[RMDB]
RNA sequence: GGGAACGACUCGAGUAGAGUCGAAAAUUCCCCUUGACGCCGGUGAAACUCUGGAAUAGGAAGAAGGAAGGUGGAAAGAAAGGAGGGACCCUCCCGAUCCGAGGGGCCCAACCACCAAGUUUGGAGAAAGGCCUAUUGUUCGCAAUAGGCAAAAGAAACAACAACAACAAC
Reactivity to DMS in 0.01 (KOAc 150mM, MgCl2 10mM, bicine 150mM(pH8.5), 24C), signal-to-noise 9, nucleotides 027 to 129: u040u010c000c000c010c120u000u000g010a100c150g000c060c030g000g040u020g030a020a070a090c050u000c030u040g010g030a000a000u040a080g030g030a060a070g030a000a020g050g000a020a020g020g030u000g050g010a080a060a120g050a070a110a060g010g010a140g000g000g000a040c040c040c020u030c000c060c090g000a120u040c150c190g020a050g010g000g010g000c030c000c040a060a060c050c060a000c060c030a090a070g040u030u050u030g030g020a050g020a070a110a080g010
Reactivity to 2A3 in 0.01 (KOAc 150mM, MgCl2 10mM, bicine 150mM(pH8.5), 24C), signal-to-noise 9, nucleotides 027 to 129: u020u020c000c000c000c000u020u140g030a050c040g030c040c040g010g000u110g050a090a030a020c020u000c030u060g010g040a010a020u040a060g030g010a020a010g000a000a010g020g010a000a030g010g030u060g020g080a080a080a040g130a050a050a010g040g020a050g000g010g010a040c010c000c000u010c010c010c010g030a020u030c030c040g010a030g000g000g010g000c000c000c000a020a050c010c020a030c020c000a030a060g060u080u100u060g050g000a080g030a050a090a030g100
An RNA of 170 nucleotides, treated with DMS and 2A3 and read out base by base. The RNA was probed in 150 mM KOAc, 10 mM MgCl2 and 150 mM bicine (pH 8.5) at 24 C. DMS adducts were read by reverse transcription with MarathonRT.